[RMDB]
RNA sequence: GGGAACGACUCGAGUAGAGUCGAAAAGUCCCCACUUUCGAGUGGGGACAAUCAAAGUUUUGGCACUCGCAGCCCGCAGCGUUGGUGCUCCCAGGCGGUGCAUAACUGCCUACUUCGGUAGGCAGAAUUACUGGACAAGUUUCGACUUGUCCAGUAAAAAAGAAACAACAACAACAAC
Reactivity to 2A3 in 0.01 (KOAc 150mM, MgCl2 10mM, bicine 150mM(pH8.5), 24C), signal-to-noise 1, nucleotides 027 to 126: g020u000c000c000c000c000a010c000u080u110u060c230g090a000g000u010g010g000g000g000a000c000a000a020u050c010a000a010a090g040u010u050u280u190g050g000c010a000c020u090c070g020c040a040g050c000c020c010g000c040a220g030c050g100u150u100g020g010u090g000c030u060c000c020c000a020g040g050c030g010g000u010g020c010a040u090a200a070c000u000g000c010c010u010a010c000u020u050c090g080g010u010a020g020g000c000a000g000a010a010
Reactivity to DMS in 0.01 (KOAc 150mM, MgCl2 10mM, bicine 150mM(pH8.5), 24C), signal-to-noise 2, nucleotides 027 to 126: g000u010c000c000c000c010a000c010u000u000u000c180g010a010g080u000g010g010g000g000a000c000a010a050u010c120a110a090a100g010u000u000u000u020g010g020c020a050c060u010c070g000c060a110g000c050c010c090g000c060a100g000c070g000u000u000g010g000u010g010c060u000c030c030c010a140g000g000c020g010g000u000g010c050a090u020a040a230c000u000g020c000c000u000a000c000u000u010c150g010g020u000a000g000g000c010a000g010a050a090
An RNA of 177 nucleotides, treated with 2A3 and DMS and read out base by base. Values are in units of 0.01, from 0 to 300, in steps of 10. The DMS profile rests on 2,394 reads. 2A3 adducts were read by reverse transcription with SuperScript II with manganese. Source: RMDB library M2PK50, as collected in RNAgym. The reactions ran in a buffer of 150 mM KOAc, 10 mM MgCl2 and 150 mM bicine (pH 8.5), at 24 C. For DMS the reverse transcriptase was MarathonRT.